Structure probing data (DMS and 2A3) for a 177-nucleotide construct. Conditions: 150 mM KOAc, 10 mM MgCl2 and 150 mM bicine (pH 8.5), 24 C.
RNA sequence: GGGAACGACUCGAGUAGAGUCGAAAAAAAGAUAUGGAUCGCAAAUACGAUGAUGACCCAUGGUGUAGAUGGGUCGGAAACGACCCAUCCGAAGCCAUGGCAAGUCGUAUUGCGAUCCUAAGUCAAACCUUUGUAAAGACUUCGGUCUUUACAAAGGAAAAGAAACAACAACAACAAC
Reactivity to DMS in 0.01 (KOAc 150mM, MgCl2 10mM, bicine 150mM(pH8.5), 24C), signal-to-noise 3, nucleotides 027 to 126: a060a070a120g010a040u010a300u000g000g010a000u010c000g010c000a040a050a080u000a010c000g000a010u000g010a080u020g000a080c300c010c000a010u000g010g020u000g000u000a130g010a020u010g000g000g010u000c000g000g000a020a080a090c000g000a020c000c000c000a010u000c010c010g000a150a300g000c000c000a000u010g000g030c030a010a060g030u000c000g010u010a010u000u010g020c020g010a000u000c000c010u000a000a110g000u010c020a140a110a250
Reactivity to 2A3 in 0.01 (KOAc 150mM, MgCl2 10mM, bicine 150mM(pH8.5), 24C), signal-to-noise 2, nucleotides 027 to 126: a020a010a020g070a020u080a030u130g010g000a000u010c000g000c030a070a200a120u030a000c010g000a000u050g070a170u070g040a070c000c000c030a010u010g040g010u300g040u180a040g000a020u000g000g040g000u020c010g000g000a050a040a000c020g010a000c030c000c000a010u000c000c050g020a080a000g010c000c010a000u010g010g000c000a050a150g050u030c010g000u010a020u000u020g000c010g000a000u040c000c010u000a020a000g000u000c050a070a040a280